[RMDB]
Structure probing data (DMS and 2A3) for a 177-nucleotide construct. It was measured as part of the RMDB library OK2TST. Reactivities are given for positions 27 through 126. DMS adducts were read by reverse transcription with MarathonRT. The RNA was probed in 150 mM KOAc, 10 mM MgCl2 and 150 mM bicine (pH 8.5) at 24 C.
RNA sequence: GGGAACGACUCGAGUAGAGUCGAAAACGACCGUGAUCCUGCACCACGCUUGGGUAUCGCGGCCCUCGGAGCUGUUGGCCCAUGUGUAGAGACCCUUCGGCGGCUGAGGAACGGCCUCGCCGGUCAGCUCCCAUACAAUAUUCGUAUUGUAUGGGAGAAAAGAAACAACAACAACAAC
Reactivity to DMS in 0.01 (KOAc 150mM, MgCl2 10mM, bicine 150mM(pH8.5), 24C), signal-to-noise 9, nucleotides 027 to 126: c120g010a120c050c020g020u000g010a070u010c020c020u000g020c070a110c100c110a070c110g010c070u010u000g010g010g010u000a050u010c030g010c060g010g010c010c010c060u010c160g010g010a120g010c030u000g010u000u000g010g010c010c010c030a050u010g010u000g010u000a070g000a160g010a130c040c020c060u000u000c060g000g010c040g000g010c020u010g010a070g010g010a160a130c150g010g010c010c020u000c070g010c040c020g010g010u000c070a130g000
Reactivity to 2A3 in 0.01 (KOAc 150mM, MgCl2 10mM, bicine 150mM(pH8.5), 24C), signal-to-noise 9, nucleotides 027 to 126: c030g050a040c010c020g030u030g030a050u060c010c010u040g020c030a030c080c020a080c080g060c060u080u100g030g000g020u090a080u170c030g000c010g040g020c010c000c000u050c070g080g030a110g010c020u060g040u220u230g070g000c020c000c010a050u090g030u010g010u090a050g030a030g030a160c010c010c000u070u100c030g050g000c020g030g020c070u090g030a070g040g060a110a100c030g090g010c000c010u030c030g020c010c010g020g040u060c030a020g030